[RMDB]
RNA sequence: GGGAACGACUCGAGUAGAGUCGAAAAGAAAAUAAUGUUCAAAUCAGGUUGGACCUUCCAAAUAUCGAACGAGUUUCUCCAACUUCGAAAGAAACACCAGUGUUCGUUCCACCACCACCUCCACCAACAUCCGUAAAUAGUUCGCUAUUUACGGAUGAAAAGAAACAACAACAACAAC
Reactivity to DMS in 0.01 (KOAc 150mM, MgCl2 10mM, bicine 150mM(pH8.5), 24C), signal-to-noise 5, nucleotides 027 to 126: g000a100a050a070a090u010a090a080u010g010u000u000c030a040a120a150u000c060a030g000g010u010u010g000g000a060c100c060u000u000c050c050a070a070a130u010a070u000c120g000a060a060c090g010a200g010u010u010u000c070u000c040c040a040a090c090u020u000c060g030a060a070a060g000a070a050a030c060a050c100c070a090g010u000g020u000u010c060g020u000u010c020c010a080c050c020a050c040c030a080c020c010u000c020c020a060c100c120a090a190
Reactivity to 2A3 in 0.01 (KOAc 150mM, MgCl2 10mM, bicine 150mM(pH8.5), 24C), signal-to-noise 4, nucleotides 027 to 126: g050a010a100a020a040u230a050a060u120g010u030u050c030a030a070a170u060c020a020g020g050u020u030g020g030a050c000c010u080u000c030c030a070a100a070u190a050u090c060g020a030a030c050g010a030g080u010u100u040c060u000c030c000a060a060c010u100u080c080g080a120a070a060g040a030a060a000c030a010c050c040a050g020u020g040u140u040c020g010u010u010c000c010a030c020c000a010c000c020a020c010c030u000c020c000a050c000c000a030a050